RNA sequence: GGGAACGACUCGAGUAGAGUCGAAAAAUACUUUCGAGUAUAAUACCUCCUAAGUCGGAUGCGUUUGACGUACUUUGUCAGCUGGCAUCGGAAACGAUGUCCAGCUUGGAUUUAAGUACCGAGCAUCCGAUAUGGAAUAUCUGACGUUCGCGUCAAAUCGUAUUGUCCGUUUCGACGGACAAUACGAAAAAGAAACAACAACAACAAC
Reactivity to 2A3 in 0.01 (KOAc 150mM, MgCl2 10mM, bicine 150mM(pH8.5), 24C), signal-to-noise 1, nucleotides 027 to 156: a000u040a020c030u050u090u170c190g020a000g010u020a000u010a100a120u100a080c010c000u060c020c010u070a100a070g000u000c000g030g000a010u010g000c000g160u150u120u270g070a100c000g000u000a000c000u000u010u010g040u020c000a000g000c010u030g000g000c020a000u000c000g010g040a010a200a010c010g000a000u030g190u120c000c040a000g150c000u000u030g010g000a000u160u300u160a010a000g000u000a010c020c000g060a020g030c000a000u000c000c010g000a000u000a000u010g010g000a040a080u080a130u130c190u050g010a010c000g030u090u070c280g020c020g110u030c000a010a030a110

This 207-nucleotide RNA was probed chemically with 2A3. The 2A3 profile rests on 714 reads. The reactions ran in a buffer of 150 mM KOAc, 10 mM MgCl2 and 150 mM bicine (pH 8.5), at 24 C. It was measured as part of the RMDB library RNAMAK. For 2A3 the reverse transcriptase was SuperScript II with manganese.